[RMDB]
RNA sequence: GGGAACGACUCGAGUAGAGUCGAAAAGUUCCCUCUUAGCGUGGAGGUUUCACUACGCUCGUUCCCCAUAUCGGUGUGGGCGCACCGGAUUUAUAAAUCAAAGUCCUUUAGGGAACGGAAAGGAACAAAAAUCCAUGGGAGUUCGCUCCCAUGGAAACCAUACAUAGACCUUCGGGUCUAUGUAUGGAAAAGAAACAACAACAACAAC
Reactivity to DMS in 0.01 (KOAc 150mM, MgCl2 10mM, bicine 150mM(pH8.5), 24C), signal-to-noise 1, nucleotides 027 to 156: g020u010u000c010c020c010u000c120u000u000a030g030c020g040u000g000g010a090g050g000u000u000u000c030a300c000u000a010c000g000c030u010c000g010u000u000c000c000c000c060a200u000a090u000c040g010g020u000g040u000g030g010g020c070g030c000a030c010c010g000g000a170u000u010u020a070u000a100a030a070u000c070a070a070a080g020u000c000c020u000u020u010a050g000g040g020a050a060c030g020g010a070a010a090g010g000a090a080c080a020a100a040a110a270u000c000c000a030u000g000g010g000a030g080u000u010c300g010c000u000c030c000c000a010u010g000g000a000a000a030
Reactivity to 2A3 in 0.01 (KOAc 150mM, MgCl2 10mM, bicine 150mM(pH8.5), 24C), signal-to-noise 2, nucleotides 027 to 156: g010u000u000c010c000c010u020c010u020u090a000g000c020g020u000g000g040a080g050g050u030u090u020c030a040c020u030a000c010g010c000u030c000g000u000u000c040c000c010c020a020u050a040u110c000g000g000u000g010u020g000g010g030c050g020c020a000c000c030g000g010a010u030u300u010a180u120a080a020a030u090c160a080a020a000g000u000c010c020u020u020u070a020g000g000g000a020a010c040g020g000a080a060a060g060g020a050a040c060a050a100a010a010a070u000c000c000a000u000g010g000g000a010g000u080u110c110g080c050u000c000c020c000a000u000g000g000a010a010a000